[RMDB]
RNA sequence: GGGAACGACUCGAGUAGAGUCGAAAAGGCCUCAUUCCAUGUGCAUGUGGGCCCAGCUGACCCUGGUGUCCAGAGGGAAAUGUGACCACAUUGACCACAGGUCAUGCUUCCAUCAUAGCAGGCUCGUGGCAGUAUUUGAGUUCGCUCAAAUACUGCCAAAAGAAACAACAACAACAAC
Reactivity to 2A3 in 0.01 (KOAc 150mM, MgCl2 10mM, bicine 150mM(pH8.5), 24C), signal-to-noise 1, nucleotides 027 to 126: g020g010c000c020u020c000a060u130u030c000c010a090u110g010u100g060c050a000u090g030u070g120g010g010c040c020c040a020g000c010u090g030a010c000c000c000u040g000g000u130g040u030c000c050a020g100a040g030g050g020a000a070a000u060g010u010g020a000c010c050a070c010a120u020u150g070a060c010c020a120c200a170g030g050u030c020a010u020g000c000u020u020c010c000a090u040c010a030u080a040g050c020a000g040g010c040u040c070g050u070

Notes:
Structure probing data (2A3) for a 177-nucleotide construct. The 2A3 profile rests on 903 reads. The RNA was probed in 150 mM KOAc, 10 mM MgCl2 and 150 mM bicine (pH 8.5) at 24 C. The data come from the RNA Mapping Database (RMDB), library RFMREP.